[RMDB]
RNA sequence: GGGAACGACUCGAGUAGAGUCGAAAACUUUCUGUACCCUUUUAUAAGGGUGUAUCCCCUUUUGGUAACUUACUGUUUGUUAAUUUGUAGUGUUCCCUGCCAGUAAGCUUGUAACACUCUAGUGACUCACCUUCGGGUGGGAGGGUAGGAAAGGGAGUAAACGGCAGAAAUUCGUUUCUGCCGUUUAAAAAGAAACAACAACAACAAC
Reactivity to DMS in 0.01 (KOAc 150mM, MgCl2 10mM, bicine 150mM(pH8.5), 24C), signal-to-noise 1, nucleotides 027 to 156: c030u010u000u000c060u020g000u000a030c000c000c000u000u000u000u010a130u000a030a050g010g020g010u000g030u000a070u000c030c000c020c070u020u000u000u000g000g020u000a030a030c010u010u000a010c030u000g000u000u010u010g000u000u000a070a020u000u010u000g020u000a160g050u000g000u010u000c010c020c030u000g010c250c030a070g020u000a040a040g010c040u010u010g010u000a110a080c060a030c030u050c010u010a080g000u000g020a150c020u010c010a050c010c000u000u000c160g060g010g000u000g030g020g020a010g020g010g040u000a150g040g010a030a030a030g010g000g000a300g060

This 207-nucleotide RNA was probed chemically with DMS. Conditions: 150 mM KOAc, 10 mM MgCl2 and 150 mM bicine (pH 8.5), 24 C. DMS adducts were read by reverse transcription with MarathonRT. The DMS profile rests on 3,202 reads.